This 177-nucleotide RNA was probed chemically with DMS. It was measured as part of the RMDB library OK2TRN.
RNA sequence: GGGAACGACUCGAGUAGAGUCGAAAAAAGUUUAAAGGGGAUGUCAGGCCAAGUUCAAGAAGAUGGACAUCUUGCUGCAUCUGUUACAAUCAUAGAGGCAAUACGUUAUCUCUCAUCUUCACAGAAACCUAAUGGAUCGGUUCGCCGAUCCAUUAGGAAAAGAAACAACAACAACAAC
Reactivity to DMS in 0.01 (KOAc 150mM, MgCl2 10mM, bicine 150mM(pH8.5), 24C), signal-to-noise 1, nucleotides 027 to 126: a030a080g000u010u000u010a080a050a180g000g050g010g000a040u000g000u000c030a080g000g010c050c070a080a060g010u000u010c170a150a110g000a020a010g030a050u000g010g020a030c120a040u000c080u000u010g010c110u000g000c080a060u000c040u000g000u000u010a040c270a070a080u050c150a060u040a020g020a040g000g000c010a040a020u040a080c160g010u000u000a050u000c040u000c030u010c030a020u010c040u010u000c000a070c250a180g020a070a080a100